[RMDB]
RNA sequence: GGGAACGACUCGAGUAGAGUCGAAAACUUAUCCUCGGGAGUCAGACUGCGAGUGCUAAGAUCCGUAGUCAAGAGGGAAACAGCCCAGACCAUCAGCUAAGGUCCCAAAGUAUACGUUAAGUGGAAACACGGUCCUUUAUUUCGAUAAAGGACCGUGAAAAGAAACAACAACAACAAC
Reactivity to DMS in 0.01 (KOAc 150mM, MgCl2 10mM, bicine 150mM(pH8.5), 24C), signal-to-noise 1, nucleotides 027 to 126: c100u020u010a120u040c080c000u000c110g010g000g020a050g000u000c050a200g010a080c000u000g020c010g000a020g000u020g000c190u020a080a150g020a040u000c010c020g000u000a000g000u020c080a100a100g000a080g040g020g040a110a120a050c120a060g010c010c020c020a140g030a120c020c020a000u000c020a020g020c080u010a120a090g000g010u000c000c000c000a160a120a110g050u000a090u000a030c120g010u000u000a070a220g030u020g010g000a130a070a300